[RMDB]
The record gives the reactivity of an RNA of 177 nucleotides to 2A3.
The reactions ran in a buffer of 150 mM KOAc, 10 mM MgCl2 and 150 mM bicine (pH 8.5), at 24 C.

RNA sequence: GGGAACGACUCGAGUAGAGUCGAAAAUUGGCCGGCAAAUGGAAUCAGAUCUGGCGACAUUAUUCAGAAGCUGUUCCCUCAGUAAAUGCGCUGUUUUCCAUCAGGAAAUACAGGCUACCGAAACAUGGGUCUACAGUCCGUUCGCGGACUGUAGACCAAAAGAAACAACAACAACAAC
Reactivity to 2A3 in 0.01 (KOAc 150mM, MgCl2 10mM, bicine 150mM(pH8.5), 24C), signal-to-noise 1, nucleotides 027 to 126: u120u000g230g000c060c000g000g000c000a000a000a140u190g010g000a140a050u160c000a040g070a150u060c060u140g000g020c020g000a050c000a100u000u060a060u030u010c050a180g200a230a040g070c000u050g020u040u000c000c000c000u060c010a050g060u170a030a040a020u040g000c040g070c000u060g000u000u000u000u000c100c200a290u240c050a150g000g000a020a020a020u120a040c000a010g000g020c000u000a050c000c150g010a000a050a020c150a130u170g040